Structure probing data (DMS) for a 177-nucleotide construct.
RNA sequence: GGGAACGACUCGAGUAGAGUCGAAAAGAUAUGGAGUGGUAGGGAGCGAUAGGGUCGGAAACGACCCGAAUCGCGAAGAACUACGUAACAUCUCCUAAGUCAAAAGGGUACGGUUCGCCGUACCCAAGUUAGCUCGAAUGUUCGCAUUCGAGCUAACAAAAGAAACAACAACAACAAC
Reactivity to DMS in 0.01 (KOAc 150mM, MgCl2 10mM, bicine 150mM(pH8.5), 24C), signal-to-noise 2, nucleotides 027 to 126: g000a010u010a050u020g000g020a040g020u010g000g010u000a000g010g000g010a040g040c000g010a000u000a190g000g000g010u000c000g010g000a020a020a050c000g000a000c000c000c000g000a020a000u000c000g010c000g010a090a120g000a130a210c010u000a000c000g010u010a070a190c190a090u000c000u000c000c000u000a000a180g010u000c020a060a070a100a120g020g010g020u000a000c000g000g000u000u020c190g020c000c000g000u000a000c000c000c010a010a020
Conditions: 150 mM KOAc, 10 mM MgCl2 and 150 mM bicine (pH 8.5), 24 C. The DMS profile rests on 1,487 reads. For DMS the reverse transcriptase was MarathonRT.